This 177-nucleotide RNA was probed chemically with DMS and 2A3. It was measured as part of the RMDB library OK2TST. The DMS profile rests on 1,288 reads. For 2A3, 1,519 sequencing reads were counted. Conditions: 150 mM KOAc, 10 mM MgCl2 and 150 mM bicine (pH 8.5), 24 C. 2A3 adducts were read by reverse transcription with SuperScript II with manganese.
RNA sequence: GGGAACGACUCGAGUAGAGUCGAAAAACAGACUAUGGGGUAAUUGAGGCAGUGUGCUUGCCUUGUUUGUCCCUAGAUGAUCCUGUCAAAAAUGACACUGGAUGGACCAAAAGACCACAGCACACUAUCGAUCCUAGCAUUUCGAUGCUAGGAUCGAAAAAGAAACAACAACAACAAC
Reactivity to DMS in 0.01 (KOAc 150mM, MgCl2 10mM, bicine 150mM(pH8.5), 24C), signal-to-noise 2, nucleotides 027 to 126: a090c060a090g030a070c030u000a040u000g020g000g000g030u000a020a010u000u000g040a010g000g040c020a010g000u010g010u000g000c030u000u000g030c010c000u000u000g000u000u000u000g000u000c000c000c010u000a020g020a150u000g000a070u000c010c010u010g030u020c030a010a150a100a100a130u000g000a050c000a040c140u000g010g000a050u010g000g010a100c040c050a050a020a050a090g000a070c100c100a080c230a030g010c010a020c020a050c130u000a130
Reactivity to 2A3 in 0.01 (KOAc 150mM, MgCl2 10mM, bicine 150mM(pH8.5), 24C), signal-to-noise 1, nucleotides 027 to 126: a000c020a000g190a080c020u060a110u280g020g010g000g010u020a030a030u010u090g020a000g010g000c020a020g070u000g010u010g130c040u040u050g010c000c000u000u010g030u020u000u020g020u090c000c000c000u010a020g000a010u060g020a020u040c000c020u000g020u000c030a030a030a050a060a300u200g010a030c020a000c060u030g000g040a030u060g050g040a040c040c060a090a080a020a100g050a010c020c070a060c090a060g070c000a010c000a000c020u030a070